[RMDB]
RNA sequence: GGGAACGACUCGAGUAGAGUCGAAAAGUUAUGAUGGCUAAGGAUAUCUCCUUUGAAACGGCCUUUAAAAGUUUGAUUCCUUUAGAUAAAGAUCAUUUUCUAUCACGAAGAUUUGGAGAUCCGGAUGCCUCAACGUACUGUUCGCAGUACGUUGAGGAAAAGAAACAACAACAACAAC
Reactivity to DMS in 0.01 (KOAc 150mM, MgCl2 10mM, bicine 150mM(pH8.5), 24C), signal-to-noise 2, nucleotides 027 to 126: g020u020u010a070u010g040a040u000g020g030c010u030a300a150g000g000a100u000a070u000c010u000c100c010u000u000u000g000a110a100a020c120g020g000c180c080u000u000u000a090a020a110a090g010u010u010u000g000a050u010u010c060c000u000u000u000a100g000a180u010a060a070a040g000a080u000c090a030u000u000u000u000c040u010a040u000c080a090c090g010a030a070g010a300u000u010u010g000g030a020g000a060u010c020c000g000g010a180u020g020
About this RNA
An RNA of 177 nucleotides, treated with DMS and read out base by base. The RNA was probed in 150 mM KOAc, 10 mM MgCl2 and 150 mM bicine (pH 8.5) at 24 C.